Annotation: Conditions: 150 mM KOAc, 10 mM MgCl2 and 150 mM bicine (pH 8.5), 24 C. Chemical mapping of a 207-nucleotide RNA with 2A3. 2A3 adducts were read by reverse transcription with SuperScript II with manganese. It was measured as part of the RMDB library M2RFPK.
RNA sequence: GGGAACGACUCGAGUAGAGUCGAAAACUCCACGCUGGGUAAUGGACGACGGCGGCGUGUGGCGAACAGGGAUACCGGUAGUCAGUGUCUCGAACAUCCCAAGGGGCGGCGGAGCUAGCACCCCGACAAAACGGGCACAAGUUCGCUUGUGCCCGAACCUGACAUAGUCGUUCGCGACUAUGUCAGGAAAAGAAACAACAACAACAAC
Reactivity to 2A3 in 0.01 (KOAc 150mM, MgCl2 10mM, bicine 150mM(pH8.5), 24C), signal-to-noise 1, nucleotides 027 to 156: c000u010c030c010a010c040g010c020u010g050g090g000u160a120a100u070g020g080a060c040g000a020c030g070g080c040g000g000c000g010u050g020u060g020g060c080g000a060a080c090a110g040g000g020a000u070a080c020c000g020g120u100a020g000u000c020a000g000u000g050u010c010u010c040g010a020a030c020a170u040c000c010c000a050a080g050g000g000g020c110g020g000c080g030g030a060g080c020u020a050g000c000a060c000c020c000c000g000a020c030a020a080a000a020c020g000g000g000c000a010c000a010a020g000u020u060c140g030c130u000u000g000u030g000c020c000c000g000a000a000